[RMDB]
RNA sequence: GGGAACGACUCGAGUAGAGUCGAAAAAGCCGGACUACGGUCCGGCAAACCUCGGUCCGGCAUCUUUGGGUUAUCUUAUAGGAUCUCUUCGGGGAUCAUCCAUUGAUACUAACUUGACCGUUGAAAACACAGGUUCCACAUUCGUGUGGAACCUGUGAAAAGAAACAACAACAACAAC
Reactivity to 2A3 in 0.01 (KOAc 150mM, MgCl2 10mM, bicine 150mM(pH8.5), 24C), signal-to-noise 1, nucleotides 027 to 126: a000g000c000c000g000g000a010c020u040a030c270g090g000u010c000c000g000g020c000a000a000a000c000c000u000c020g000g000u040c000c040g000g000c020a010u010c010u000u020u000g070g000g010u060u020a130u160c070u050u190a240u120a300g190g060a120u010c070u050c000u160u070c160g050g020g000g020a010u020c000a000u010c030c000a000u000u000g010a000u030a110c070u130a270a000c010u000u110g000a040c000c030g020u010u100g130a080a070a010a000
The record gives the reactivity of an RNA of 177 nucleotides to 2A3. For 2A3 the reverse transcriptase was SuperScript II with manganese. Values cover nucleotides 27 to 126. For 2A3, 523 sequencing reads were counted.